[RMDB]
The record gives the reactivity of an RNA of 177 nucleotides to DMS and 2A3. It was measured as part of the RMDB library OK1LIB. For 2A3 the reverse transcriptase was SuperScript II with manganese. For DMS, 50,434 sequencing reads were counted.
RNA sequence: GGGAACGACUCGAGUAGAGUCGAAAAUAAGAGAGAAUGCCACAACAGAAAGCAACGCACUGUGAAAUCAGGAUUAAGGACUGGCAUCCAGUGGGAGCUCCAGCCCGGUUCAGGAAUAUACGCCAAAGUCGAGUGUGUGCUUCGGUGCAUAUUCGACAAAAGAAACAACAACAACAAC
Reactivity to DMS in 0.01 (KOAc 150mM, MgCl2 10mM, bicine 150mM(pH8.5), 24C), signal-to-noise 9, nucleotides 027 to 126: u030a080a090g010a110g000a050g000a060a040u010g000c020c020a060c090a120a060c110a060g010a060a090a070g010c070a050a090c100g000c060a040c010u010g010u030g010a040a060a080u020c040a040g000g000a070u010u020a110a100g010g010a080c040u000g000g010c290a090u000c030c010a040g010u010g010g000g000a130g000c050u010c030c030a060g000c020c010c010g000g000u010u000c070a070g010g010a050a050u020a050u010a060c100g010c030c030a060a050a090
Reactivity to 2A3 in 0.01 (KOAc 150mM, MgCl2 10mM, bicine 150mM(pH8.5), 24C), signal-to-noise 9, nucleotides 027 to 126: u130a020a020g090a000g000a000g030a070a010u070g020c010c010a040c030a120a030c010a040g100a060a100a010g030c020a030a030c040g010c040a020c020u020g010u040g110a040a040a060u080c020a020g030g020a030u110u130a070a030g050g020a030c010u010g030g000c020a030u010c000c000a010g030u050g020g030g000a020g010c010u010c010c010a010g000c000c000c000g010g000u070u060c030a010g000g040a040a010u100a010u020a150c070g020c040c020a070a060a010